RNA sequence: GGGAACGACUCGAGUAGAGUCGAAAAGAUCGAUCAGAUCCGCCUAUAUAAAAGACAACGCACCGAAGGUGAACAAGAUCGCAGAUAAAGGUAUUUACAAGGGAAAAAAGUCAGCAAAAACAAGAGAAAUAGCUGAUAAUUUCGAUUAUCAGCUAUUAAAAGAAACAACAACAACAAC
Reactivity to 2A3 in 0.01 (KOAc 150mM, MgCl2 10mM, bicine 150mM(pH8.5), 24C), signal-to-noise 5, nucleotides 027 to 126: g030a040u080c050g020a050u210c100a060g030a060u020c030c010g040c000c010u130a150u010a010u030a120a220a030a030g060a030c030a040a010c130g020c030a030c010c020g110a090a030g030g010u030g010a040a020c030a020a030g020a020u070c040g000c070a000g010a070u140a080a120a000g050g000u030a060u040u060u040a090c050a030a050g100g000g000a060a100a050a040a000a000g080u080c060a020g030c060a060a050a020a020a070c030a040a040g010a010g050a150
Reactivity to DMS in 0.01 (KOAc 150mM, MgCl2 10mM, bicine 150mM(pH8.5), 24C), signal-to-noise 4, nucleotides 027 to 126: g000a050u020c020g010a120u030c140a120g000a050u000c000c020g000c000c010u000a090u060a090u050a060a060a120a100g000a090c100a050a110c180g000c010a040c060c050g010a130a100g000g010u000g000a050a050c100a040a090g000a050u010c040g010c070a050g000a050u020a040a050a050g000g000u000a030u000u010u010a070c070a040a050g000g000g020a000a020a010a090a040a050g020u000c030a020g000c040a010a060a050a060a070c100a060a090g000a090g000a090